[RMDB]
RNA sequence: GGGAACGACUCGAGUAGAGUCGAAAAGAUAUGGAUUGUCUCGAAACGCAUCGAUCUCGGAAACGAGGGAGCGUUACCGAGAGCAAUCCUAAGUCAAAACAAGGUACGCCUUCGGGCGUACCUUGAACAACCUUUAUCUGUUCGCAGAUAAAGGUUGAAAAGAAACAACAACAACAAC
Reactivity to 2A3 in 0.01 (KOAc 150mM, MgCl2 10mM, bicine 150mM(pH8.5), 24C), signal-to-noise 3, nucleotides 027 to 126: g020a010u090a060u110g010g010a010u000u010g040u020c010u000c010g000a020a020a020c020g030c020a290u300c100g090a150u020c020u000c010g040g000a110a070a060c000g000a000g010g010g020a020g000c000g000u020u010a120c070c010g000a000g030a010g090c010a010a000u010c010c000u010a080a010g050u050c050a000a020a120a200c010a000a020g020g000u010a010c000g020c010c020u180u230c300g060g020g000c000g000u000a000c000c000u000u000g000a010a000
Reactivity to DMS in 0.01 (KOAc 150mM, MgCl2 10mM, bicine 150mM(pH8.5), 24C), signal-to-noise 6, nucleotides 027 to 126: g010a040u010a300u010g000g010a010u000u010g010u010c000u000c000g020a050a030a010c010g010c010a300u000c130g000a050u010c000u010c000g000g000a150a100a170c010g000a020g000g000g010a010g010c000g020u000u000a040c140c010g000a000g010a070g020c000a010a000u000c000c010u000a030a070g010u010c030a080a080a100a240c010a010a000g010g000u000a000c000g010c000c000u000u010c190g010g010g010c000g010u000a000c000c000u000u000g000a050a160